[RMDB]
RNA sequence: GGGAACGACUCGAGUAGAGUCGAAAAUUCUUCUCCUUUCAAUAGCAACAGCAUUUCUAGGCUAUGUCCUCCCAUGAGGACAAAUAUCCUUCUGAGGAGCAACAGUAAUCACCAACUUAGUCUCAGCCCUGUUUUCCUUCUUCGGAAGGAAAACAGGAAAAGAAACAACAACAACAAC
Reactivity to 2A3 in 0.01 (KOAc 150mM, MgCl2 10mM, bicine 150mM(pH8.5), 24C), signal-to-noise 3, nucleotides 027 to 126: u090u000c000u070u010c010u040c030c050u030u010u220c140a140a180u070a040g030c000a020a150c120a070g120c000a070u070u160u130c060u090a020g010g020c000u020a040u100g000u000c010c000u020c050c080c000a170u280g050a000g000g000a000c000a000a010a000u040a000u060c000c000u060u120c050u050g040a030g000g020a030g060c030a010a000c030a060g060u150a030a140u110c090a030c100c000a020a120c030u090u170a060g170u030c050u000c050a050g000c010
This 177-nucleotide RNA was probed chemically with 2A3. The reactions ran in a buffer of 150 mM KOAc, 10 mM MgCl2 and 150 mM bicine (pH 8.5), at 24 C. For 2A3 the reverse transcriptase was SuperScript II with manganese.